An RNA of 177 nucleotides, treated with DMS and read out base by base. DMS adducts were read by reverse transcription with MarathonRT. For DMS, 3,063 sequencing reads were counted. It was measured as part of the RMDB library TTRINS.
[RMDB]
RNA sequence: GGGAACGACUCGAGUAGAGUCGAAAAGAUAUGGAGCUUAGAACAGCUGCCUUUCAUGACAUGGAGUUAAUCGGAAACGAUUGUCAGCUCCAACAGCAUGAAGGCAGCUGUUCUAAGCUCCUAAGUCCACGUAAAAUAGCUUCGGCUAUUUUACGUGAAAAGAAACAACAACAACAAC
Reactivity to DMS in 0.01 (KOAc 150mM, MgCl2 10mM, bicine 150mM(pH8.5), 24C), signal-to-noise 3, nucleotides 027 to 126: g000a110u000a300u000g010g010a020g020c000u000u000a050g020a020a010c020a010g010c000u010g010c000c000u010u000u010c000a010u000g010a040c080a300u000g010g010a030g020u000u000a060a020u010c000g020g010a120a140a240c000g000a010u000u010g000u020c300a100g000c010u000c000c000a020a090c290a180g000c000a000u010g000a020a010g000g000c000a010g020c000u000g000u000u000c010u000a000a010g020c000u000c000c000u000a000a070g010u020c040